[RMDB]
RNA sequence: GGGAACGACUCGAGUAGAGUCGAAAACGGCGGUUCAUACCCUAGGCAUUACCGUUGACCUGCCAACAGCCCUGCUACUGAGUGUGGUUGCGGCGAUCUGUGCCUGUGGUGCAUCCGGUGUUGCCGAGCCUCAUCGAGUGUUCGCACUCGAUGAGGCAAAAGAAACAACAACAACAAC
Reactivity to DMS in 0.01 (KOAc 150mM, MgCl2 10mM, bicine 150mM(pH8.5), 24C), signal-to-noise 1, nucleotides 027 to 126: c060g000g040c030g040g000u000u000c090a070u160a110c020c010c040u000a040g000g000c010a020u010u000a070c030c030g000u000u020g010a040c020c060u010g020c030c030a060a170c100a120g000c030c080c100u030g000c020u000a140c080u000g000a120g020u000g000u000g020g010u000u000g010c110g000g000c060g000a080u010c060u020g010u000g000c040c080u000g000u010g000g020u000g000c060a030u010c060c000g020g010u000g020u000u000g010c040c010g000a140
Reactivity to 2A3 in 0.01 (KOAc 150mM, MgCl2 10mM, bicine 150mM(pH8.5), 24C), signal-to-noise 1, nucleotides 027 to 126: c040g080g000c040g010g010u000u070c030a060u170a200c000c010c010u020a040g020g030c010a000u000u180a020c000c000g020u000u080g050a070c000c020u040g000c000c000a000a040c010a040g000c010c030c040u100g080c010u030a080c050u070g100a070g230u160g040u110g050g080u000u030g000c030g000g000c000g010a060u080c040u050g030u040g010c000c000u080g080u170g020g050u080g030c040a050u040c080c000g140g190u030g010u030u070g060c040c000g000a030